An RNA of 207 nucleotides, treated with 2A3 and DMS and read out base by base. Values are in units of 0.01, from 0 to 300, in steps of 10. For 2A3, 2,620 sequencing reads were counted. The DMS profile rests on 2,349 reads. The data come from the RNA Mapping Database (RMDB), library OK3TST. The reactions ran in a buffer of 150 mM KOAc, 10 mM MgCl2 and 150 mM bicine (pH 8.5), at 24 C. For 2A3 the reverse transcriptase was SuperScript II with manganese. Reactivities are given for positions 27 through 156.

RNA sequence: GGGAACGACUCGAGUAGAGUCGAAAACAGUAUUGGGUUUCAGAAGGAGAGCUGAAAAUGAGGAGAAGUCUUCUUACUUAGGGCACAUCACCCAGCAAAGUUGCUGGCAUUUUGUAGCUGCCUCAUAUAUAUUUGUUAAACAAAUGUGAAUACCUGAGUAAUUAGUCAGGUUCGCCUGACUAAUUACAAAAGAAACAACAACAACAAC
Reactivity to 2A3 in 0.01 (KOAc 150mM, MgCl2 10mM, bicine 150mM(pH8.5), 24C), signal-to-noise 5, nucleotides 027 to 156: c040a020g090u140a150u110u110g020g000g020u020u070u100c030a010g030a050a010g040g020a010g010a020g000c030u030g030a070a070a040a080u120g020a000g040g020a030g020a090a020g050u000c020u120u020c010u110u100a120c020u040u130a030g020g010g010c010a020c000a020u020c010a030c000c020c000a000g000c020a030a200a160g140u280u070g030c000u020g030g000c010a040u030u030u070u080g040u050a070g000c040u050g030c020c010u060c020a010u080a010u050a000u010a080u100u070u100g020u030u120a090a150a030c030a020a100a040u090g010u030g080a070a040u090a150c050c010u060g010a040
Reactivity to DMS in 0.01 (KOAc 150mM, MgCl2 10mM, bicine 150mM(pH8.5), 24C), signal-to-noise 1, nucleotides 027 to 156: c070a150g040u000a080u000u000g010g030g020u000u000u000c030a080g010a120a100g040g010a080g010a060g000c030u010g000a050a050a080a120u020g000a090g040g000a080g000a100a100g000u010c000u000u000c040u000u000a080c170u030u010a070g040g010g020c020a080c080a090u000c050a060c100c010c000a090g030c040a100a140a100g010u000u000g030c010u000g040g030c000a050u000u000u010u000g000u000a160g010c060u000g000c010c040u030c060a050u000a070u010a090u000a070u000u000u000g000u000u020a060a120a160c020a000a020a030u010g030u000g000a140a110u000a080c040c010u050g000a300